[RMDB]
RNA sequence: GGGAACGACUCGAGUAGAGUCGAAAAUAAAGCAGCGUGUUGAUGAUCGCAUGGUCACGCUCAUGCGGCGGAACCGGCAUGGCGACAUAAUCGAUAUCGGCAUGCUGGCUGGUUUCGCUCUGAACGACCCGAGUAUACUGUUCGCAGUAUACUCGGGAAAAGAAACAACAACAACAAC
Reactivity to 2A3 in 0.01 (KOAc 150mM, MgCl2 10mM, bicine 150mM(pH8.5), 24C), signal-to-noise 2, nucleotides 027 to 126: u230a000a070a020g110c050a000g000c010g000u040g050u230u160g130a190u060g060a090u060c040g010c140a020u070g020g010u100c030a000c100g030c010u050c020a000u040g000c000g020g000c060g040g000a040a040c010c020g040g000c020a010u030g030g070c000g040a020c030a090u240a120a120u240c050g040a050u030a010u120c020g030g050c020a000u020g000c030u020g000g060c020u010g000g000u000u000u010c010g010c000u030c020u060g030a070a020c040g030a020
Reactivity to DMS in 0.01 (KOAc 150mM, MgCl2 10mM, bicine 150mM(pH8.5), 24C), signal-to-noise 3, nucleotides 027 to 126: u010a070a100a100g030c110a030g020c020g030u010g000u010u000g010a070u010g010a090u000c020g010c300a080u000g000g000u000c080a070c090g030c000u000c010a040u010g020c050g000g020c010g010g010a050a080c040c000g010g020c000a010u010g000g000c000g000a030c050a040u000a110a110u020c240g010a110u000a080u000c000g010g000c000a000u000g000c010u010g020g030c080u000g000g010u000u000u000c020g000c000u010c050u000g000a070a080c160g000a180

Chemical mapping of a 177-nucleotide RNA with 2A3 and DMS.
Source: RMDB library OK2TST, as collected in RNAgym.
For DMS the reverse transcriptase was MarathonRT.